[RMDB]
An RNA of 177 nucleotides, treated with DMS and 2A3 and read out base by base.
It was measured as part of the RMDB library TTRDEL.
Conditions: 150 mM KOAc, 10 mM MgCl2 and 150 mM bicine (pH 8.5), 24 C.
Values cover nucleotides 27 to 126.
RNA sequence: GGGAACGACUCGAGUAGAGUCGAAAAGAUAUGGAAUGGUCAGCCAACAGCGUAUGGAUCGGAAACGAUCCUACGACAUGGUUCAUUCCUAAGUCAAAACCCCGUAUGUGUUCGCACAUACGGGGAAGAGGCAUUAACGGUUCGCCGUUAAUGCCUCAAAAGAAACAACAACAACAAC
Reactivity to DMS in 0.01 (KOAc 150mM, MgCl2 10mM, bicine 150mM(pH8.5), 24C), signal-to-noise 1, nucleotides 027 to 126: g000a000u010a120u000g000g020a000a000u000g010g010u050c300a170g030c000c030a070a140c180a170g000c020g000u000a040u000g000g000a010u010c000g000g000a060a040a030c000g000a000u000c000c010u000a000c000g000a070c060a110u020g010g000u000u030c000a000u000u000c000c000u000a030a070g000u010c010a140a100a130a110c000c000c000c000g030u010a000u010g010u010g000u010u010c190g030c000a040c000a020u000a000c010g000g000g000g000a000a020
Reactivity to 2A3 in 0.01 (KOAc 150mM, MgCl2 10mM, bicine 150mM(pH8.5), 24C), signal-to-noise 2, nucleotides 027 to 126: g010a010u010a010u060g010g010a010a000u030g000g060u300c200a030g000c020c020a080a080c240a250g110c010g010u060a070u300g020g010a010u000c010g000g000a020a000a030c000g000a000u010c000c000u010a000c000g040a110c020a140u060g000g000u080u000c000a010u020u000c000c000u010a030a010g010u000c020a020a040a090a300c010c000c000c020g000u000a000u010g050u000g030u030u060c250g100c100a000c010a000u010a010c000g000g000g000g000a020a020
DMS adducts were read by reverse transcription with MarathonRT.
For DMS, 1,092 sequencing reads were counted.
2A3 adducts were read by reverse transcription with SuperScript II with manganese.